[RMDB]
RNA sequence: GGGAACGACUCGAGUAGAGUCGAAAAGGUUCGCGGCGCUGGGUAGUAUAGCGCGAGGUGCCGGGGCGGCGUCUGUCGAGAUCGUGUUGCAGAUCGGCCUCCGUCAACGGGAUGCCGGGCGGCACGCGUCCACUGGUGGAUUCGUCCACCAGUGGACAAAAGAAACAACAACAACAAC
Reactivity to 2A3 in 0.01 (KOAc 150mM, MgCl2 10mM, bicine 150mM(pH8.5), 24C), signal-to-noise 3, nucleotides 027 to 126: g050g000u050u080c040g000c050g060g010c000g000c010u140g040g040g020u030a040g050u090a130u110a170g070c040g000c010g000a040g010g040u060g010c020c020g010g010g020g010c020g050g020c000g030u060c020u030g080u100c070g010a050g000a110u100c040g000u030g010u090u090g000c050a060g030a300u070c030g020g000c020c090u000c010c010g120u130c060a100a090c090g080g000g000a010u080g030c000c000g010g050g010c000g010g000c030a020c000g010c020
Reactivity to DMS in 0.01 (KOAc 150mM, MgCl2 10mM, bicine 150mM(pH8.5), 24C), signal-to-noise 1, nucleotides 027 to 126: g000g040u000u000c040g000c020g000g000c130g020c050u000g000g000g060u000a000g070u020a070u040a050g000c000g010c030g000a040g000g000u000g000c050c020g040g000g030g020c060g010g000c020g000u020c020u000g050u010c080g000a180g000a150u010c010g000u000g060u020u000g000c000a060g030a190u030c080g000g000c010c020u000c010c000g010u020c280a100a070c300g030g030g000a070u000g000c000c000g040g000g000c030g020g000c050a030c000g000c240